Notes: The record gives the reactivity of an RNA of 177 nucleotides to 2A3 and DMS. 2A3 adducts were read by reverse transcription with SuperScript II with manganese. The DMS profile rests on 2,116 reads.

[RMDB]
RNA sequence: GGGAACGACUCGAGUAGAGUCGAAAAAUAAUAGUAGAAAUUCAUUGUAACUUUGUUUUCUUCGUAUAAUAGGUGAGUUAUUAAGCCAUCCCAACUUAAUAACUUACAACAUUAGUAGGUGACCAAACGUAUGAUAUACGUUCGCGUAUAUCAUACGAAAAGAAACAACAACAACAAC
Reactivity to 2A3 in 0.01 (KOAc 150mM, MgCl2 10mM, bicine 150mM(pH8.5), 24C), signal-to-noise 1, nucleotides 027 to 126: a000u150a010a050u070a050g070u050a000g050a050a150a000u160u100c040a060u020u210g060u130a110a120c060u090u110u120g000u000u060u080u030c000u060u020c010g010u190a180u060a160a110u050a080g060g050u020g010a000g010u000u000a000u020u000a000a010g010c020c000a020u030c000c000c020a000a000c000u000u020a000a000u000a000a010c000u010u000a010c000a060a010c010a050u000u030a040g140u040a000g000g110u030g020a040c050c040a100a080a000
Reactivity to DMS in 0.01 (KOAc 150mM, MgCl2 10mM, bicine 150mM(pH8.5), 24C), signal-to-noise 2, nucleotides 027 to 126: a060u000a060a060u010a100g000u000a080g020a070a100a040u010u000c050a040u000u010g000u020a070a080c050u010u000u000g000u000u010u000u000c030u000u010c050g020u000a080u010a040a040u000a080g000g000u000g000a040g010u000u010a000u000u000a000a000g000c000c060a120u000c000c010c000a150a170c000u000u000a000a000u000a010a010c000u020u000a010c010a100a070c170a040u000u000a040g020u010a060g010g020u010g000a160c080c030a000a060a120